[RMDB]
RNA sequence: GGGAACGACUCGAGUAGAGUCGAAAAAAGGAGGGCUGGGCGGUGGUGGGCCCACCCCCUCAUAGCCGCAGGACUCUGGAUCAUGAAGGUGUUGAGGCCUCAAACUAGACAGGAAGUGGAGGGAUUCCCGUAUUAGGAUGUUCGCAUCCUAAUACGGAAAAGAAACAACAACAACAAC
Reactivity to 2A3 in 0.01 (KOAc 150mM, MgCl2 10mM, bicine 150mM(pH8.5), 24C), signal-to-noise 6, nucleotides 027 to 126: a000a010g110g020a070g000g030g020c090u030g000g000g010c040g010g020u060g020g030u050g030g050g000c000c010c000a030c000c000c000c000c000u030c010a080u120a030g020c000c010g000c040a030g020g020a070c020u030c030u100g010g030a060u050c020a040u110g090a080a050g010g010u060g030u120u090g030a030g010g030c020c000u050c020a120a170a050c040u060a030g070a100c040a040g030g060a080a040g010u030g040g040a060g030g000g020a020u060u080c000
Reactivity to DMS in 0.01 (KOAc 150mM, MgCl2 10mM, bicine 150mM(pH8.5), 24C), signal-to-noise 4, nucleotides 027 to 126: a100a050g000g010a090g000g010g020c300u000g020g000g020c030g020g010u000g010g010u010g010g000g010c000c010c010a060c030c050c000c010c010u000c050a060u010a150g000c040c030g000c070a090g010g000a050c060u010c050u010g020g000a090u000c050a070u010g000a120a060g000g010u000g030u000u010g000a080g000g000c020c020u000c070a090a060a100c090u010a070g010a090c110a080g000g000a070a060g000u000g000g000a100g000g000g010a080u020u010c090
An RNA of 177 nucleotides, treated with 2A3 and DMS and read out base by base. The RNA was probed in 150 mM KOAc, 10 mM MgCl2 and 150 mM bicine (pH 8.5) at 24 C. Values are in units of 0.01, from 0 to 300, in steps of 10.